RNA sequence: GGGAACGACUCGAGUAGAGUCGAAAAGAAAUUCCCGAUCGGCGGUAAAGUCCGCGAGCCGAACGAAAAAGGUUUGGCAGGAACCGGUGAGAUUCCCGUACCGACAGUAUAGUCUGGAUGGAAGAAGGUAGCCUCCUCUCGUUCGCGAGAGGAGGAAUCCUUAUGCAAACUUCGGUUUGCAUAAGGAAAAAGAAACAACAACAACAAC
Reactivity to DMS in 0.01 (KOAc 150mM, MgCl2 10mM, bicine 150mM(pH8.5), 24C), signal-to-noise 2, nucleotides 027 to 156: g030a090a150a270u000u000c000c000c000g010a080u000c040g000g000c020g010g040u000a100a200a160g040u000c000c010g030c000g010a180g000c000c000g000a060a300c010g000a070a100a170a220a190g000g010u000u000u010g040g060c030a130g020g000a080a090c020c030g030g020u040g010a240g000a300u000u010c000c030c000g010u010a030c000c030g000a050c040a120g000u000a090u010a130g000u000c050u000g020g010a150u000g000g010a080a130g010a090a080g010g000u000a130g020c000c010u030c000c020u000c000u000c000g030u010u010c300g000c010g020a000g000a040g030g010a010g000g000a000a030

Source information: An RNA of 207 nucleotides, treated with DMS and read out base by base. Values cover nucleotides 27 to 156. The RNA was probed in 150 mM KOAc, 10 mM MgCl2 and 150 mM bicine (pH 8.5) at 24 C.